[RMDB]
RNA sequence: GGGAACGACUCGAGUAGAGUCGAAAAGUCCUGCCAUGAGACCGCAACGAGAGCAUGUCGCAUCGAAUGGACUCGGGGAGUCGGCAGCUUGCCCCACGGAUGAGCGCCUAAUCCCGGCAUUCGGGAAAAUAGACUGGAUAGUUCGCUAUCCAGUCAAUCUAAGAUUGAUCUUCGGAUCAAUCUUAGAAAAAGAAACAACAACAACAAC
Reactivity to DMS in 0.01 (KOAc 150mM, MgCl2 10mM, bicine 150mM(pH8.5), 24C), signal-to-noise 2, nucleotides 027 to 156: g020u010c010c000u000g020c040c020a090u000g000a090g020a070c010c120g010c040a130a160c050g010a110g000a170g000c030a080u000g020u000c040g050c020a120u000c050g000a140a190u000g000g020a100c040u000c030g010g010g020g000a110g020u010c100g010g000c000a080g020c010u010u000g010c030c020c000c050a160c180g000g010a090u000g010a060g030c030g020c020c010u000a050a150u000c000c000c000g020g000c080a070u000u000c030g010g020g000a060a040a100a130u000a110g000a040c000u000g000g000a040u000a020g010u000u010c300g020c000u000a030u000c000c000a020g000u000c000a000a020
Reactivity to 2A3 in 0.01 (KOAc 150mM, MgCl2 10mM, bicine 150mM(pH8.5), 24C), signal-to-noise 4, nucleotides 027 to 156: g050u010c000c000u010g020c010c010a090u090g030a030g040a120c030c050g060c100a080a120c130g040a040g010a020g160c060a060u090g050u130c040g000c060a090u070c030g020a020a010u040g030g100a110c040u050c120g000g000g020g010a030g100u110c020g030g000c040a070g010c010u020u030g030c000c010c000c030a050c090g050g010a220u070g010a010g020c000g010c000c000u010a020a070u050c000c000c000g010g010c040a030u070u070c000g010g010g050a020a040a020a100u090a040g000a000c000u000g000g000a000u000a000g010u010u030c180g010c100u000a000u000c000c000a010g000u000c000a000a000

Structure probing data (DMS and 2A3) for a 207-nucleotide construct.
The RNA was probed in 150 mM KOAc, 10 mM MgCl2 and 150 mM bicine (pH 8.5) at 24 C.
For DMS, 4,083 sequencing reads were counted.
2A3 is a SHAPE reagent: it acylates the 2'-hydroxyl of flexible nucleotides of all four kinds.
The 2A3 profile rests on 4,041 reads.